About this RNA:
This 177-nucleotide RNA was probed chemically with 2A3 and DMS. The RNA was probed in 150 mM KOAc, 10 mM MgCl2 and 150 mM bicine (pH 8.5) at 24 C.

RNA sequence: GGGAACGACUCGAGUAGAGUCGAAAACGACUGGAAAGCAGAUGCCGAACGGCGCGAUUUCACCAUUAAUGCGCUUUAUGUCACUGCGGACGGUACGGUGAUCGAUCAGGUGGGCGGGCUUGCCGAAGCCCGAUGGCCUGUUCGCAGGCCAUCGGGCAAAAGAAACAACAACAACAAC
Reactivity to 2A3 in 0.01 (KOAc 150mM, MgCl2 10mM, bicine 150mM(pH8.5), 24C), signal-to-noise 1, nucleotides 027 to 126: c050g110a070c040u020g020g100a140a010a010g000c000a010g160a190u050g000c040c000g040a050a010c070g010g020c020g060c000g030a030u080u160u190c110a120c090c030a060u040u300a160a040u080g020c000g070c060u000u020u090a130u170g000u030c020a000c040u050g020c000g010g020a000c010g040g000u220a020c020g010g060u140g010a090u060c080g050a040u020c050a030g120g000u040g000g100g040c090g000g010g000c000u030u040g080c010c000g060a020a030
Reactivity to DMS in 0.01 (KOAc 150mM, MgCl2 10mM, bicine 150mM(pH8.5), 24C), signal-to-noise 1, nucleotides 027 to 126: c100g000a110c110u000g010g000a120a300a180g020c010a040g010a090u000g000c020c050g000a050a110c300g020g010c000g020c020g000a200u000u020u020c140a110c100c150a090u000u000a080a100u000g000c020g000c000u000u000u000a060u050g000u000c030a060c040u010g000c000g000g030a290c050g000g000u000a030c000g020g000u000g000a100u000c060g000a090u000c040a050g000g000u000g000g020g010c100g020g000g000c020u010u000g000c130c060g000a210a030